[RMDB]
RNA sequence: GGGAACGACUCGAGUAGAGUCGAAAAGCCGGUACGGCAGCGCGCACACGCACACAGUGCGCCGUUAUCUUCUCCGGCUUGCGUGCAUGCUGCCUUCCGCAAAGCUGCAGCGCGGCGCUCUGGAGGCGGAACUAUAAGACUUCGGUCUUAUAGUUCCAAAAGAAACAACAACAACAAC
Reactivity to 2A3 in 0.01 (KOAc 150mM, MgCl2 10mM, bicine 150mM(pH8.5), 24C), signal-to-noise 2, nucleotides 027 to 126: g000c020c010g000g100u130a080c070g020g010c010a030g000c010g020c010g040c070a010c000a010c110g070c010a040c030a020c050a130g030u020g010c000g010c010c010g000u060u090a150u100c090u180u040c090u060c010c010g010g020c000u000u050g010c010g010u020g070c010a020u070g010c000u000g000c030c010u010u050c070c030g070c030a060a060a050g010c060u100g040c030a050g040c040g000c030g060g020c010g000c030u050c020u060g080g040a040g010g060c010
Reactivity to DMS in 0.01 (KOAc 150mM, MgCl2 10mM, bicine 150mM(pH8.5), 24C), signal-to-noise 2, nucleotides 027 to 126: g000c050c000g030g000u020a120c220g000g000c090a090g000c050g020c050g000c010a050c010a110c090g030c060a040c160a090c070a110g020u000g010c000g010c010c050g010u000u000a060u000c070u000u020c140u010c030c010g010g000c040u000u000g010c060g020u000g030c040a070u010g020c030u010g020c020c030u010u000c070c070g030c160a050a100a080g000c070u010g010c030a040g030c070g010c050g000g010c040g020c030u000c060u000g000g040a080g020g000c160
Chemical mapping of a 177-nucleotide RNA with 2A3 and DMS.
The RNA was probed in 150 mM KOAc, 10 mM MgCl2 and 150 mM bicine (pH 8.5) at 24 C.
Reactivities are given for positions 27 through 126.
High 2A3 reactivity points to a flexible backbone, as in loops and unpaired stretches.
For DMS the reverse transcriptase was MarathonRT.